[RMDB]
RNA sequence: GGGAACGACUCGAGUAGAGUCGAAAAGGGCGUUGAAGUUCUACGCUUCGAUGCGGAUGGAGGCCAAACGCAGUGAACUGCUCAAAGACCGCUUUGGUAACUAUGUCGGCAUUAAGAGUAAGUUAACGAUACUAACUUUAUUCGUAAAGUUAGUAUCAAAAGAAACAACAACAACAAC
Reactivity to 2A3 in 0.01 (KOAc 150mM, MgCl2 10mM, bicine 150mM(pH8.5), 24C), signal-to-noise 9, nucleotides 027 to 126: g050g020g000c030g010u030u050g030a050a020g030u100u030c060u110a030c070g010c000u040u050c060g070a070u070g000c020g040g010a060u080g040g030a020g070g180c010c000a040a030a010c060g000c030a010g010u030g150a080a060c010u050g020c010u040c060a110a110a070g060a140c010c010g000c040u060u060u050g060g010u060a080a060c020u030a050u140g070u180c000g050g000c020a020u060u080a090a020g020a010g060u060a190a020g020u090u070a060a020c080
Reactivity to DMS in 0.01 (KOAc 150mM, MgCl2 10mM, bicine 150mM(pH8.5), 24C), signal-to-noise 9, nucleotides 027 to 126: g010g010g010c070g020u000u000g010a110a190g010u000u000c090u000a130c110g010c010u000u000c120g010a060u010g010c020g010g000a100u010g000g000a080g010g000c070c040a050a040a060c140g020c040a070g010u000g010a070a060c060u000g000c050u000c080a060a150a150g000a080c030c030g000c040u000u000u000g000g010u010a070a120c070u000a050u000g010u000c020g010g010c050a050u010u010a060a110g000a040g010u000a040a070g010u000u000a090a100c170